[RMDB]
RNA sequence: GGGAACGACUCGAGUAGAGUCGAAAAAGCAAACUCCUCUGGAGUCCUUCGGAUCCAAAGGAGAAAACUACCGGCGGAGGGUGAUCCACUCGGAGUUGGACGGGAAAAGCACAUCCAGAGGACCCCUCUAUACUAAAGCGUUCGCGCUUUAGUAUAGAAAAGAAACAACAACAACAAC
Reactivity to DMS in 0.01 (KOAc 150mM, MgCl2 10mM, bicine 150mM(pH8.5), 24C), signal-to-noise 1, nucleotides 027 to 126: a040g020c120a120a110a200c090u000c000c010u000c020u020g010g040a030g000u000c060c010u000u010c160g020g030a160u010c050c010a030a170a070g010g000a040g000a070a120a110a120c030u000a130c050c040g020g040c220g000g000a010g010g010g040u000g020a100u000c020c010a100c060u010c090g010g030a110g000u020u000g000g020a150c020g000g020g000a040a080a060a060g020c090a050c100a140u000c000c000a060g000a050g000g000a070c040c000c020c020u000
Reactivity to 2A3 in 0.01 (KOAc 150mM, MgCl2 10mM, bicine 150mM(pH8.5), 24C), signal-to-noise 1, nucleotides 027 to 126: a000g080c060a100a070a010c030u030c000c000u000c000u010g000g000a000g020u000c000c000u040u070c000g160g020a090u000c040c020a090a070a000g040g020a120g080a090a070a000a060c040u110a190c060c000g020g030c040g000g070a030g020g070g050u120g090a130u000c040c010a000c010u100c100g000g040a060g070u140u070g020g000a000c010g000g050g050a010a160a000a070g040c040a050c000a150u000c000c000a000g000a000g010g000a010c000c010c000c030u010

Notes:
This 177-nucleotide RNA was probed chemically with DMS and 2A3. Values cover nucleotides 27 to 126. The DMS profile rests on 751 reads. In probing experiments dimethyl sulfate is read out at A N1 and C N3, which are open when not base-paired. Source: RMDB library 15KREP, as collected in RNAgym. The reactions ran in a buffer of 150 mM KOAc, 10 mM MgCl2 and 150 mM bicine (pH 8.5), at 24 C.